About this RNA:
An RNA of 207 nucleotides, treated with 2A3 and read out base by base. For 2A3, 370 sequencing reads were counted. The data come from the RNA Mapping Database (RMDB), library OK3TST.
[RMDB]
RNA sequence: GGGAACGACUCGAGUAGAGUCGAAAAAAUUAUAGACUUGAUAUAUUAUCAGAUUGAGUGAAUACCCGAGUUUCAUUGCUUUGGUUGAUGGUUCACUGUAUUUGUAUUGAGACUGUGGCUGACUUAGCUGGAGACUGAUAGAUGCAAGUGAAUCAUACCACGUAAUGGGAUUCGUCCCAUUACGUGGAAAAGAAACAACAACAACAAC
Reactivity to 2A3 in 0.01 (KOAc 150mM, MgCl2 10mM, bicine 150mM(pH8.5), 24C), signal-to-noise 1, nucleotides 027 to 156: a000a010u300u080a140u020a050g040a030c000u000u010g020a000u000a030u060a020u300u280a170u300c070a040g120a170u060u110g020a030g040u030g030a040a020u080a120c010c030c040g000a070g010u050u100u170c070a040u120u140g010c020u210u110u140g010g040u000u110g010a000u000g010g010u000u020c000a040c020u020g010u030a060u040u110u090g260u030a110u020u080g030a020g000a010c030u060g000u030g300g000c000u010g080a300c090u180u300a030g010c000u010g020g000a030g000a000c000u030g000a000u000a000g030a000u000g030c030a190a120g020u000g000a020a000u000c020a000u010a010
Reactivities are given for positions 27 through 156.